[RMDB]
RNA sequence: GGGAACGACUCGAGUAGAGUCGAAAAGAAUCCUCGUCGACGAUACUGAUUUCGAUCUGUAUGUUUUGUUUCCAGUGCUGGACUUAGCCAUAUGUCUCCACUUUUCGUCGUCGAGGAUACAAUUAGAGGGUACGCAUUAGUUCGCUGAUGCGUACCCAAAAGAAACAACAACAACAAC
Reactivity to 2A3 in 0.01 (KOAc 150mM, MgCl2 10mM, bicine 150mM(pH8.5), 24C), signal-to-noise 8, nucleotides 027 to 126: g110a010a060u000c000c000u000c000g010u000c000g000a010c000g010a000u040a090c060u120g060a140u050u070u140c120g060a090u020c060u080g070u050a150u070g100u050u050u080u050g090u020u080u020c030c030a020g020u040g150c090u080g000g020a050c000u050u060a020g070c020c030a060u070a040u120g050u030c010u000c050c020a060c020u110u090u030u020c010g000u000c000g000u000c000g000a000g000g000a000u000a010c010a000a060u090u100a090g060a080
Reactivity to DMS in 0.01 (KOAc 150mM, MgCl2 10mM, bicine 150mM(pH8.5), 24C), signal-to-noise 3, nucleotides 027 to 126: g000a110a020u000c000c000u000c000g020u000c000g020a030c000g000a030u030a030c090u010g020a130u010u010u030c100g030a040u000c050u010g000u010a030u020g000u010u010u030u000g000u000u000u000c000c080a060g000u000g020c080u000g000g000a030c030u010u000a050g000c150c090a100u000a070u010g010u010c020u010c300c050a080c150u000u000u010u000c000g000u020c000g010u010c010g000a000g000g010a000u000a000c090a040a120u030u050a070g020a300
This 177-nucleotide RNA was probed chemically with 2A3 and DMS. For 2A3, 7,616 sequencing reads were counted. The DMS profile rests on 6,493 reads. For DMS the reverse transcriptase was MarathonRT.